The data come from the RNA Mapping Database (RMDB), library OK2TST. Chemical mapping of a 177-nucleotide RNA with 2A3 and DMS.

RNA sequence: GGGAACGACUCGAGUAGAGUCGAAAAACAACUACGAGGAAGAUGAACUCGCUAGCCUACAGAAAGACCUCGCUGAGUUAUGUAAAUUUGCUAUAUUUGGUAGAGAGGUUUGUCCUACUACUGGAACCACUGAGCAUCCUUUCGAGGAUGCUCAGUGAAAAGAAACAACAACAACAAC
Reactivity to 2A3 in 0.01 (KOAc 150mM, MgCl2 10mM, bicine 150mM(pH8.5), 24C), signal-to-noise 2, nucleotides 027 to 126: a010c020a010a040c010u040a010c020g010a000g090g080a110a110g050a260u170g050a150a040c010u010c000g010c010u000a030g070c000c020u050a100c040a000g080a010a130a020g010a020c000c000u000c020g000c070u040g050a040g030u080u040a040u130g060u050a010a250a300u210u240u180g040c020u020a030u020a040u090u030u030g010g010u010a040g020a000g000a020g220g010u050u060u090g000u050c010c010u000a070c010u000a010c030u020g000g000a030a030c010
Reactivity to DMS in 0.01 (KOAc 150mM, MgCl2 10mM, bicine 150mM(pH8.5), 24C), signal-to-noise 2, nucleotides 027 to 126: a070c130a140a200c050u000a050c050g000a040g000g000a110a080g000a120u000g010a140a110c060u020c010g000c190u010a000g000c060c070u020a060c170a100g000a050a130a090g000a060c040c020u000c030g010c010u020g000a050g020u000u000a060u000g030u010a020a060a150u010u000u000g000c060u000a030u000a070u000u000u000g000g000u000a090g010a050g010a060g010g000u000u000u000g000u000c000c000u000a140c030u000a060c060u010g000g000a080a080c270